Structure probing data (2A3 and DMS) for a 177-nucleotide construct. The RNA was probed in 150 mM KOAc, 10 mM MgCl2 and 150 mM bicine (pH 8.5) at 24 C. It was measured as part of the RMDB library OK2TRN. For 2A3 the reverse transcriptase was SuperScript II with manganese. For DMS, 3,820 sequencing reads were counted.
RNA sequence: GGGAACGACUCGAGUAGAGUCGAAAAGAAAAUGCAGGCCAGGUUUUGUUGGCUUCAUUACUUAAAUUCUCUGCAUACAGCAUGCAGAGACGAGGGCCCACCUGGGCGUGCCUGGAAGACUGUGACGCUUGAUAGAAUCGUUCGCGAUUCUAUCAAGAAAAGAAACAACAACAACAAC
Reactivity to 2A3 in 0.01 (KOAc 150mM, MgCl2 10mM, bicine 150mM(pH8.5), 24C), signal-to-noise 2, nucleotides 027 to 126: g000a020a130a020a030u120g000c010a010g010g070c010c010a000g060g030u050u110u190u130g130u040u160g000g000c000u020u110c040a050u070u110a070c040u100u150a050a110a120u160u010c020u000c000u000g000c000a010u030a170c110a140g100c020a060u010g000c000a000g000a010g000a000c030g030a120g000g060g020c000c000c020a040c010c040u110g000g010g020c020g050u000g040c060c010u020g030g050a040a020g060a050c080u070g050u090g120a030c040g010
Reactivity to DMS in 0.01 (KOAc 150mM, MgCl2 10mM, bicine 150mM(pH8.5), 24C), signal-to-noise 4, nucleotides 027 to 126: g000a090a080a100a040u010g000c130a030g000g000c010c010a040g000g010u010u010u020u010g020u010u000g010g000c020u000u000c060a050u010u000a140c080u000u000a070a100a150u010u010c000u000c000u010g010c000a030u000a100c290a110g030c220a150u000g010c000a000g000a010g020a010c300g000a110g010g010g000c000c000c060a130c100c050u000g010g000g010c030g000u000g010c010c020u000g010g000a060a090g010a110c050u000g010u000g000a130c190g000